[RMDB]
RNA sequence: GGGAACGACUCGAGUAGAGUCGAAAAGCUGGCCCAUGCAGACACAGUUGGACAGUGUGCUGUUGGACAAGCCGGUGCCUCCUUCCACAAGAUGCAUUCAUAUUUUGUCCCUGUAUUGCAGCAACAGGAAUAGUAUCCGUUUCGACGGAUACUAUUCAAAAGAAACAACAACAACAAC
Reactivity to 2A3 in 0.01 (KOAc 150mM, MgCl2 10mM, bicine 150mM(pH8.5), 24C), signal-to-noise 8, nucleotides 027 to 126: g020c020u030g020g020c020c010c010a030u120g000c010a000g050a040c010a000c010a070g130u170u160g150g060a090c050a090g040u030g020u050g120c000u010g020u050u030g010g000a030c050a090a020g020c020c010g030g010u040g010c000c010u040c010c010u060u030c010c020a060c020a070a030g060a060u070g010c020a030u020u080c020a020u060a120u140u130u090u080g040u020c020c000c000u030g060u100a120u100u150g020c030a050g000c010a020a060c020a060g010
Reactivity to DMS in 0.01 (KOAc 150mM, MgCl2 10mM, bicine 150mM(pH8.5), 24C), signal-to-noise 7, nucleotides 027 to 126: g000c030u000g010g020c020c010c020a070u000g020c020a020g000a090c040a010c010a080g020u010u010g010g010a150c160a120g010u010g020u000g010c000u000g010u010u000g010g000a090c060a100a090g010c040c030g010g020u000g000c040c010u000c020c020u010u000c040c030a080c140a090a090g000a060u000g020c050a040u000u000c070a060u000a090u000u000u000u000g010u010c010c000c060u000g010u000a060u000u000g010c070a050g010c060a060a060c100a090g010